[RMDB]
RNA sequence: GGGAACGACUCGAGUAGAGUCGAAAAAACUGGACAGUCACUGCCACUUUGCACAUUUUGAUUUUUUUUUUAAACAAACAUUGUGUUGACAUUAAGAAUGUUGGUUUACUUUCAAAUCGGUCCCCUGUCGAGUUCGGCUCUGGGUGGGCAGUAGGACGCUUCUAUAAUGGUUCGCCAUUAUAGAAGCAAAAGAAACAACAACAACAAC
Reactivity to 2A3 in 0.01 (KOAc 150mM, MgCl2 10mM, bicine 150mM(pH8.5), 24C), signal-to-noise 2, nucleotides 027 to 156: a000a000c080u120g010g000a020c020a020g050u110c040a010c090u010g000c010c010a050c030u070u120u050g000c030a000c000a090u040u050u000u020g060a080u120u160u100u030u020u070u040u030u080u230a050a050a010c040a030a000a000c030a110u130u000g000u010g000u050u050g060a040c030a100u050u110a090a050g070a100a110u080g000u010u010g000g120u040u060u010a170c050u050u060u030c070a160a160a060u050c040g070g000u060c030c000c000c020u060g020u040c020g000a010g060u000u120c120g150g030c040u000c020u080g040g000g010u150g130g020g000c010a020g030u020a060g040g020a020c090
Source: RMDB library OK3TST, as collected in RNAgym. Structure probing data (2A3) for a 207-nucleotide construct. 2A3 adducts were read by reverse transcription with SuperScript II with manganese. The reactions ran in a buffer of 150 mM KOAc, 10 mM MgCl2 and 150 mM bicine (pH 8.5), at 24 C. The 2A3 profile rests on 720 reads.